[RMDB]
Conditions: 150 mM KOAc, 10 mM MgCl2 and 150 mM bicine (pH 8.5), 24 C. Chemical mapping of a 170-nucleotide RNA with 2A3 and DMS. For 2A3, 5,404 sequencing reads were counted.
RNA sequence: GGGAACGACUCGAGUAGAGUCGAAAACUAAAUGCUGGGUGGAAACCGAUCUGAAGAAAGGGCCACAUGAAUUCUGUUCACAGCAUACGCUUUAUAUUAAGGAUGGCGACGAUGGUUACUUCCUUCCAAAGUCGCUCGUUCGCGAGCGACAAAAGAAACAACAACAACAAC
Reactivity to 2A3 in 0.01 (KOAc 150mM, MgCl2 10mM, bicine 150mM(pH8.5), 24C), signal-to-noise 4, nucleotides 027 to 129: c040u060a100a000a080u020g000c000u030g000g160g000u000g010g010a100a090a160c030c000g050a080u000c010u150g240a170a170g040a010a110a000g020g010g090c040c000a020c000a010u080g010a020a030u150u070c050u070g120u080u030c000a030c000a060g000c000a000u040a080c020g040c010u040u220u040a170u100a060u140u230a080a060g010g000a000u010g050g000c010g000a010c000g030a020u020g050g020u000u060a030c000u160u090c030c000u080u000c060c000a060a010a000
Reactivity to DMS in 0.01 (KOAc 150mM, MgCl2 10mM, bicine 150mM(pH8.5), 24C), signal-to-noise 6, nucleotides 027 to 129: c020u090a080a090a030u070g020c000u000g050g030g000u050g110g020a050a050a080c030c010g060a300u020c030u030g110a100a090g010a000a020a130g000g010g010c030c000a020c010a100u120g030a080a020u010u090c150u000g030u000u030c050a160c020a030g010c000a050u060a150c150g020c190u030u000u060a060u060a120u050u080a040a120g000g000a020u030g010g010c030g040a030c000g020a200u020g000g000u110u050a080c300u000u010c080c000u020u000c030c000a030a050a230
DMS (dimethyl sulfate) methylates the pairing face of unpaired adenines and cytosines.